[RMDB]
RNA sequence: GGGAACGACUCGAGUAGAGUCGAAAAAAACAUACUCAAACUAAACGAAUUAACUAGUUUAGUGUUAUUUAGUUCGUGGAGGUUCAUUUGCGGGUUAAGUUGCUGUUUAGCCAGAGUGCUCCAAGCUUGGCUUGCUAUACCAACCAGCUUCGACCUGCUAAUUGUGCGGAUUCGUCCGCACAAUUAGAAAAGAAACAACAACAACAAC
Reactivity to 2A3 in 0.01 (KOAc 150mM, MgCl2 10mM, bicine 150mM(pH8.5), 24C), signal-to-noise 2, nucleotides 027 to 156: a000a000a000c060a020u090a010c010u050c040a110a070a060c000u020a020a000a020c020g040a060a030u260u030a150a080c160u050a090g050u110u010u010a080g010u070g000u040u060a060u010u090u070a050g000u030u110c060g040u040g010g080a130g070g050u020u030c020a040u080u140u190g030c050g020g000g010u000u030a060a030g030u050u020g000c020u030g020u060u060u040a020g020c020c010a030g010a000g100u090g040c040u000c060c030a040a000g010c010u090u110g020g000c000u020u000g040c010u070a040u040a220c000c090a050a030c000c000a010g010c000u050u070c100g020a000c020c000u000g020
Reactivity to DMS in 0.01 (KOAc 150mM, MgCl2 10mM, bicine 150mM(pH8.5), 24C), signal-to-noise 2, nucleotides 027 to 156: a010a050a040c060a100u000a050c040u000c020a140a060a070c020u000a040a040a010c020g010a140a160u010u000a050a050c110u000a100g020u000u000u010a040g020u010g000u040u000a050u000u000u010a040g010u010u000c030g000u000g000g010a130g050g010u000u020c040a110u010u000u010g030c040g010g040g030u000u000a080a190g010u000u000g010c020u030g000u000u010u010a060g010c000c040a130g010a120g010u000g000c060u010c160c040a020a050g000c030u010u010g090g010c000u000u020g020c050u000a140u000a120c090c050a050a060c020c000a070g020c030u000u010c020g030a030c000c000u000g000